[RMDB]
Chemical mapping of a 207-nucleotide RNA with 2A3 and DMS. Source: RMDB library OK3TST, as collected in RNAgym. For 2A3 the reverse transcriptase was SuperScript II with manganese.
RNA sequence: GGGAACGACUCGAGUAGAGUCGAAAAAUGAACUUCGAUGCAGCUCACGUUGAUAAGGUACGCAUCGAAGUUGAACAUGUUACUUUCAGGGGAAUCUUUAACGUAAGUCGGACUAGUCUUCCUGGAAUUGUUGUAUAUGGCGCUGAUCAGGAAGUUGCUCUACAUAUCAAUUCGUUGAUAUGUAGAGAAAAGAAACAACAACAACAAC
Reactivity to 2A3 in 0.01 (KOAc 150mM, MgCl2 10mM, bicine 150mM(pH8.5), 24C), signal-to-noise 6, nucleotides 027 to 156: a010u100g020a000a000c000u010u000c000g000a000u010g020c010a040g010c070u070c080a100c070g140u160u190g090a140u090a140a030g010g030u060a050c130g000c000a000u000c000g000a000a010g000u000u010g000a010a020c030a010u070g040u060u100a060c040u050u070u100c050a030g010g000g020g010a030a030u040c050u060u170u090a120a040c050g040u060a070a030g070u100c020g010g020a040c010u030a020g070u060c020u100u050c020c000u010g030g020a050a070u040u030g020u020u020g020u010a050u010a050u200g050g000c020g000c070u070g040a110u100c010a010g020g000a030a010g020u020u070g010
Reactivity to DMS in 0.01 (KOAc 150mM, MgCl2 10mM, bicine 150mM(pH8.5), 24C), signal-to-noise 4, nucleotides 027 to 156: a130u010g000a040a030c010u000u000c000g020a040u000g020c010a300g040c020u000c030a110c090g020u000u010g020a150u010a100a110g020g040u010a070c080g010c020a020u000c010g020a020a020g020u000u000g010a080a090c080a100u000g020u000u000a060c070u000u010u010c060a090g010g010g010g020a080a070u000c040u000u000u000a050a070c060g020u000a080a120g020u000c040g020g000a060c070u000a090g020u000c030u000u000c010c010u000g020g010a050a090u000u000g000u000u000g020u010a080u000a080u010g030g020c050g030c050u000g010a120u010c020a040g020g010a040a050g020u000u000g010